This 207-nucleotide RNA was probed chemically with DMS and 2A3. The DMS profile rests on 2,302 reads. Conditions: 150 mM KOAc, 10 mM MgCl2 and 150 mM bicine (pH 8.5), 24 C. The 2A3 profile rests on 2,899 reads. Source: RMDB library OK3TST, as collected in RNAgym. Reactivities are given for positions 27 through 156.
[RMDB]
RNA sequence: GGGAACGACUCGAGUAGAGUCGAAAAUUUCUACCGUAAAGACACAUGCAUGCAUAUGUUGAUUGCAGCGCUAUUCACAAUGGCAAACAUAUGGAAUCAACCUAAGUGCCCAUCAAUGGUAGGCUGGAUAAAGAAAAUGUAGUACAUAUACACCACAGUACAGAAGGAUGUUCGCAUCCUUCUGUACAAAAGAAACAACAACAACAAC
Reactivity to DMS in 0.01 (KOAc 150mM, MgCl2 10mM, bicine 150mM(pH8.5), 24C), signal-to-noise 2, nucleotides 027 to 156: u000u010u010c000u010a030c020c030g030u000a050a170a120g000a140c090a030c000a060u000g050c040a150u000g060c010a130u020a050u000g070u000u000g000a050u000u010g000c050a050g020c070g010c050u000a080u000u010c140a100c080a110a130u000g030g030c020a170a070a040c050a020u010a050u010g020g050a130a090u000c080a060a030c020c010u030a070a130g020u010g000c000c040c010a170u000c070a070a080u000g000g050u010a090g090g030c080u020g020g010a120u000a040a060a150g000a080a000a060a060u000g000u000a040g040u010a090c030a030u010a060u000a040c070a060c010c020a060c060a140
Reactivity to 2A3 in 0.01 (KOAc 150mM, MgCl2 10mM, bicine 150mM(pH8.5), 24C), signal-to-noise 5, nucleotides 027 to 156: u060u060u000c020u020a060c010c020g080u090a100a070a070g100a010c030a010c010a100u130g060c030a050u070g000c020a020u090a010u150g030u030u050g070a100u040u190g040c020a040g030c040g000c070u020a040u120u150c060a030c010a120a070u050g040g000c020a090a070a050c030a090u100a080u090g040g060a010a030u060c030a070a050c000c010u070a130a040g040u000g030c000c030c020a050u070c040a040a080u100g000g020u030a040g000g000c000u040g050g020a060u080a120a070a040g080a010a020a040a010u080g000u070a030g030u040a030c020a040u170a010u060a100c050a010c040c120a030c030a040